RNA sequence: GGGAACGACUCGAGUAGAGUCGAAAAACAGGCCGGCGUCGUUGAUACAAAGUGGGCUUUGCAAAAGGCGAUGGAUUUAGAAUUAGAUUUAGUGGAGAUUGCCCCUAAGGCUGUGCCGCCGGUCUGCUCCCUAACCGAAUUUCGAUUCGGUUAGGGAAAAAGAAACAACAACAACAAC
Reactivity to 2A3 in 0.01 (KOAc 150mM, MgCl2 10mM, bicine 150mM(pH8.5), 24C), signal-to-noise 2, nucleotides 027 to 126: a020c000a000g000g000c000c010g000g020c020g020u030c000g010u030u010g040a090u090a290c030a000a110a070g070u290g060g020g000c060u070u040u010g030c030a050a090a060a040g140g070c050g030a020u050g100g010a020u000u110u120a200g080a240a120u160u040a040g040a080u080u040u030a150g030u060g050g020a170g030a050u090u030g000c030c000c000c000u010a000a030g030g070c010u020g090u050g000c020c000g000c000c000g000g000u000c000u000g000c000
Reactivity to DMS in 0.01 (KOAc 150mM, MgCl2 10mM, bicine 150mM(pH8.5), 24C), signal-to-noise 1, nucleotides 027 to 126: a130c030a010g010g010c010c010g000g010c010g010u000c000g000u000u000g010a130u000a070c060a050a220a050g030u000g030g000g010c020u000u010u000g010c120a070a160a130a200g010g020c060g000a060u010g000g000a070u000u000u000a050g000a150a080u010u000a040g010a050u000u000u010a060g020u000g010g020a260g000a100u010u000g000c030c010c010c060u000a040a210g020g010c020u000g020u000g000c040c010g010c010c010g000g010u000c000u000g000c070